[RMDB]
RNA sequence: GGGAACGACUCGAGUAGAGUCGAAAAGAACGGUCCGAGUCCCUCGCGCUGUUCGGAGAGCAGUGUCCAGUAGUCGUCGGCGGUUUCGACACCACCGGGUGCCUCGAUGGCCAGCCCGACGAUGACGCCGUUCACACAACUUCGGUUGUGUGAACGGAAAAGAAACAACAACAACAAC
Reactivity to 2A3 in 0.01 (KOAc 150mM, MgCl2 10mM, bicine 150mM(pH8.5), 24C), signal-to-noise 1, nucleotides 027 to 126: g020a070a000c030g030g030u010c020c020g000a010g100u070c060c030c000u020c000g000c010g020c020u000g010u070u070c060g110g100a180g020a010g050c050a020g020u040g050u090c050c010a030g010u040a010g000u020c020g000u000c010g010g000c000g000g000u040u000u000c000g000a000c020a010c000c000a090c080c090g300g000g000u020g000c010c000u030c030g040a110u100g080g040c000c000a030g040c040c000c010g000a010c050g000a010u040g010a000c040g000
Reactivity to DMS in 0.01 (KOAc 150mM, MgCl2 10mM, bicine 150mM(pH8.5), 24C), signal-to-noise 2, nucleotides 027 to 126: g000a020a050c020g020g010u000c230c030g000a080g010u000c050c100c020u000c070g010c300g000c020u000g020u000u000c010g030g000a170g040a070g040c030a090g000u010g040u020c040c070a070g050u030a150g010u000c000g020u000c010g010g010c010g010g000u000u000u000c000g010a020c010a020c030c020a230c300c250g000g000g020u000g010c080c150u000c060g040a060u030g000g000c000c020a110g030c090c010c000g010a000c000g010a010u000g000a120c200g000